[RMDB]
RNA sequence: GGGAACGACUCGAGUAGAGUCGAAAACUAUUUAUAGACAGAACAGUGGAAAACGUAUAUCGCUAUAAACCUUAGACACCGAAUCUUCCAGUCGUACAAUUCCACAUAGGCGAGGCAUAAGCGAAAGAAUGAGGACGGGAUUCGUCCCGUCCUCAUUAAAAGAAACAACAACAACAAC
Reactivity to DMS in 0.01 (KOAc 150mM, MgCl2 10mM, bicine 150mM(pH8.5), 24C), signal-to-noise 2, nucleotides 027 to 126: c040u020a000u000u000u000a060u050a030g000a100c200a140g030a220a040c150a120g000u000g010g080a120a060a050a030c140g010u000a030u010a020u040c040g000c010u010a050u000a000a070a100c110c080u000u000a140g020a080c050a030c190c050g000a030a080u000c020u040u000c000c020a150g000u060c050g020u000a100c250a100a180u010u000c070c000a020c040a090u000a070g000g000c020g000a020g020g000c000a020u030a040a200g030c030g040a050a070a130g000
Reactivity to 2A3 in 0.01 (KOAc 150mM, MgCl2 10mM, bicine 150mM(pH8.5), 24C), signal-to-noise 1, nucleotides 027 to 126: c000u030a100u040u110u000a080u110a000g040a040c070a030g120a120a000c000a070g000u040g050g060a040a060a000a000c000g000u030a030u000a000u140c000g010c000u020a020u060a030a110a030c000c010u000u090a000g000a000c000a000c110c040g020a130a130u040c000u110u000c070c000a000g040u030c000g000u030a090c060a120a150u000u110c070c040a010c040a120u090a020g000g070c150g000a060g000g000c000a010u060a210a000g090c130g080a050a000a010g050